[RMDB]
RNA sequence: GGGAACGACUCGAGUAGAGUCGAAAAUGUCCCACAUUUGCGGAAGUGGCUAUGUGAGGACGGGGGAGGCGGGUCCCUUAGAGAUAAGAGACAAUCAUAAGGGGAGAUAUCAGAGAAAAUCGUAAGGGGAGCAGAUGGUUGUCAAGAGAAUAGGCUAGUCAAAAUUAGGUUUCGACCUAAUUUUGACAAAAGAAACAACAACAACAAC
Reactivity to 2A3 in 0.01 (KOAc 150mM, MgCl2 10mM, bicine 150mM(pH8.5), 24C), signal-to-noise 1, nucleotides 027 to 156: u130g030u000c040c150c010a010c040a010u110u070u100g010c010g060g030a130a090g050u100g170g000c020u020a010u050g020u030g000a040g070g020a010c010g080g000g000g000g000a000g060g030c110g040g000g020u070c010c020c020u030u090a030g080a000g030a020u190a120a080g020a020g010a140c060a020a020u030c020a040u130a070a010g000g130g070g000a050g040a040u140a020u090c090a040g010a010g040a040a080a040a080u080c140g050u060a020a110g000g000g060g010a000g010c000a000g050a080u030g020g010u000u000g020u020c010a030a030g050a010g060a110a050u070a110g040g050c060u080a090